The record gives the reactivity of an RNA of 177 nucleotides to 2A3 and DMS. The RNA was probed in 150 mM KOAc, 10 mM MgCl2 and 150 mM bicine (pH 8.5) at 24 C. Values cover nucleotides 27 to 126. DMS adducts were read by reverse transcription with MarathonRT. Source: RMDB libraries RFM100 and RFMREP, as collected in RNAgym. For 2A3 the reverse transcriptase was SuperScript II with manganese.
RNA sequence: GGGAACGACUCGAGUAGAGUCGAAAAUUUCGAUUCUUGUCAGUUAUCUUAGUAAAAUACAAAACUCUAUAAAGAACCACAGGAAAAUCAGCAGCAAUGACAAGCAUUGACAUUAACAACUUACAAAUGAUAGAGCUAAGUUCGCUUAGCUCUAUCAAAAAGAAACAACAACAACAAC
Reactivity to 2A3 in 0.01 (KOAc 150mM, MgCl2 10mM, bicine 150mM(pH8.5), 24C), signal-to-noise 4, nucleotides 027 to 126: u030u010u000c010g000a000u010u010c000u010u020g040u000c010a070g010u030u110a100u160c050u030u080a070g060u150a080a040a080a060u260a100c070a070a150a040a090c060u070c010u060a160u090a260a130a020g060a120a080c050c050a070c040a110g000g130a040a100a020a120u120c050a010g080c010a000g050c010a050a160u050g010a010c000a000a020g000c000a000u010u040g040a030c040a030u040u120a080a060c100a080a020c080u130u300a090c070a040a040a090
Reactivity to DMS in 0.01 (KOAc 150mM, MgCl2 10mM, bicine 150mM(pH8.5), 24C), signal-to-noise 2, nucleotides 027 to 126: u000u010u000c000g000a040u000u000c000u010u000g000u020c010a020g020u010u010a030u000c050u000u000a100g020u030a050a030a030a100u040a170c050a040a030a040a050c030u000c050u000a180u040a100a060a130g050a070a080c070c070a050c070a070g000g010a010a050a080a120u060c060a070g000c030a120g000c080a100a080u010g000a020c030a020a010g010c070a040u000u000g010a040c130a000u010u010a070a040c150a050a090c040u010u010a090c190a070a030a050